[RMDB]
Chemical mapping of a 177-nucleotide RNA with DMS and 2A3. Conditions: 150 mM KOAc, 10 mM MgCl2 and 150 mM bicine (pH 8.5), 24 C. For DMS the reverse transcriptase was MarathonRT. For 2A3 the reverse transcriptase was SuperScript II with manganese.
RNA sequence: GGGAACGACUCGAGUAGAGUCGAAAAGGCACGUGAAGCUGGAGUUCAGUUCAGUGAAGCGCCAGUAAACGGCGGGGGUAACUAUAACCCUCUUAAGGUAGCGAAAUGCCUUGUCGGACAAGUACCGACGGUAGAGGAGGUUCGCCUCCUCUACCGUAAAAGAAACAACAACAACAAC
Reactivity to DMS in 0.01 (KOAc 150mM, MgCl2 10mM, bicine 150mM(pH8.5), 24C), signal-to-noise 4, nucleotides 027 to 126: g000g000c010a030c020g000u000g000a150a290g000c010u000g010g000a010g010u040u020c170a120g010u010u000c090a070g000u000g000a100a270g020c040g000c010c010a060g000u000a020a110a160c030g000g000c300g000g010g000g000g010u020a080a090c170u020a120u030a090a020c030c000c000u000c000u000u030a110a110g000g010u000a100g000c050g000a060a050a080u010g000c020c000u000u000g000u010c000g000g000a040c160a070a100g010u020a120c050c010g010
Reactivity to 2A3 in 0.01 (KOAc 150mM, MgCl2 10mM, bicine 150mM(pH8.5), 24C), signal-to-noise 3, nucleotides 027 to 126: g040g000c040a050c100g010u020g070a120a000g010c000u000g000g030a050g000u110u160c090a040g010u050u090c020a040g010u030g170a120a000g000c000g000c050c000a020g010u050a010a120a020c000g020g020c010g020g010g000g000g000u050a070a000c050u050a040u110a300a060c000c020c000u000c000u040u190a030a040g010g000u010a010g020c010g030a070a040a060u040g000c000c010u020u030g030u000c000g000g070a100c110a150a070g070u070a120c000c010g000